Structure probing data (2A3 and DMS) for a 177-nucleotide construct.

[RMDB]
RNA sequence: GGGAACGACUCGAGUAGAGUCGAAAACGUGUUAGCACCACAACAUCGUGUUCUGCGUACAUCGGUCCGCUCCUAGCGUGGAUAGGCGGUAACCAAUCGAGGCACGCCGUCGGGUUCGUCGCUGAUCACUAAGGGAGGAGUUCGCUCCUCCCUUAGUAAAAGAAACAACAACAACAAC
Reactivity to 2A3 in 0.01 (KOAc 150mM, MgCl2 10mM, bicine 150mM(pH8.5), 24C), signal-to-noise 8, nucleotides 027 to 126: c060g030u030g010u060u100a050g030c060a060c060c000a020c020a070a080c030a070u150c060g010u020g030u100u080c030u080g030c010g070u060a040c010a130u090c070g020g010u020c040c040g010c020u080c010c010u050a080g040c030g070u080g030g040a060u030a090g040g000c000g010g020u020a040a050c010c010a040a060u180c070g030a160g010g030c060a030c140g000c010c010g020u040c020g070g080g000u020u020c030g030u010c010g030c030u020g050a090u140c030
Reactivity to DMS in 0.01 (KOAc 150mM, MgCl2 10mM, bicine 150mM(pH8.5), 24C), signal-to-noise 6, nucleotides 027 to 126: c080g000u000g000u010u000a140g010c060a080c140c050a070c060a060a060c110a080u020c050g020u010g000u010u010c030u000g000c040g000u010a040c090a060u010c070g000g000u000c020c030g020c040u010c010c020u010a090g020c070g000u020g010g010a080u040a080g000g000c030g000g000u030a110a120c030c060a110a060u040c190g000a130g000g000c080a070c100g010c010c030g020u000c040g010g000g020u010u000c020g000u010c020g000c020u000g000a130u030c120

Reactivities are given for positions 27 through 126. The data come from the RNA Mapping Database (RMDB), library OK1LIB. For 2A3, 7,211 sequencing reads were counted. The reactions ran in a buffer of 150 mM KOAc, 10 mM MgCl2 and 150 mM bicine (pH 8.5), at 24 C.